[RMDB]
RNA sequence: GGGAACGACUCGAGUAGAGUCGAAAAUCAGGAUGUAUUUUGCCUUCUUAUUUACGUUUGACAGGACCCUACAUACGGCAUGCACACAGGAGUCGAGGGUUGUGUGUUAACUGGGUGCGUUCUGAGCGGCACCUAGCGAAUUCGUUCGCUAGGUGCCAAAAGAAACAACAACAACAAC
Reactivity to 2A3 in 0.01 (KOAc 150mM, MgCl2 10mM, bicine 150mM(pH8.5), 24C), signal-to-noise 2, nucleotides 027 to 126: u050c010a010g060g000a040u010g000u050a060u090u020u060u140g020c020c000u040u020c000u080u280a250u130u130u070a020c100g010u000u000u220g040a040c040a030g000g080a000c000c000c030u040a030c040a080u150a080c010g040g000c000a000u100g020c020a010c000a000c000a070g160g050a050g040u070c040g030a010g000g030g050u060u000g090u000g000u000g010u120u070a100a000c000u010g090g030g000u130g010c000g000u040u000c020u050g000a010g050c080